[RMDB]
RNA sequence: GGGAACGACUCGAGUAGAGUCGAAAAGUGCGAUCACUGUCCAUGAAGCUCAGGGUGCAACAUUCACUGAAACUACGAUUAUUGCCACGACAGAUGCCCGUGGGCUGAUCCAGUCUUCUAGAGCCCACAUAUGAUCUGGGUUCGCCCAGAUCAUAUGAAAAGAAACAACAACAACAAC
Reactivity to 2A3 in 0.01 (KOAc 150mM, MgCl2 10mM, bicine 150mM(pH8.5), 24C), signal-to-noise 5, nucleotides 027 to 126: g040u050g010c060g020a020u050c020a020c130u090g020u040c010c010a040u050g030a050a020g010c020u030c060a050g070g030g030u070g030c000a030a040c000a060u050u070c020a040c110u140g120a150a140a060c100u160a060c110g040a030u080u000a030u080u130g050c060c040a040c040g140a070c070a050g070a050u160g040c000c000c030g010u020g000g000g000c010u010g000a010u000c000c010a040g070u030c040u090u000c030u070a070g020a060g200c000c000c020a030
Reactivity to DMS in 0.01 (KOAc 150mM, MgCl2 10mM, bicine 150mM(pH8.5), 24C), signal-to-noise 8, nucleotides 027 to 126: g030u010g010c140g020a040u000c020a050c110u010g020u010c030c030a060u000g010a150a160g010c040u010c050a080g010g000g020u000g000c040a040a060c050a040u000u000c040a120c120u000g010a080a090a100c160u000a090c160g010a050u000u000a060u000u010g010c070c040a050c050g000a140c180a080g000a070u010g020c020c060c020g040u000g000g000g010c030u000g000a060u000c040c040a090g000u000c050u000u000c070u000a130g010a130g010c010c000c000a170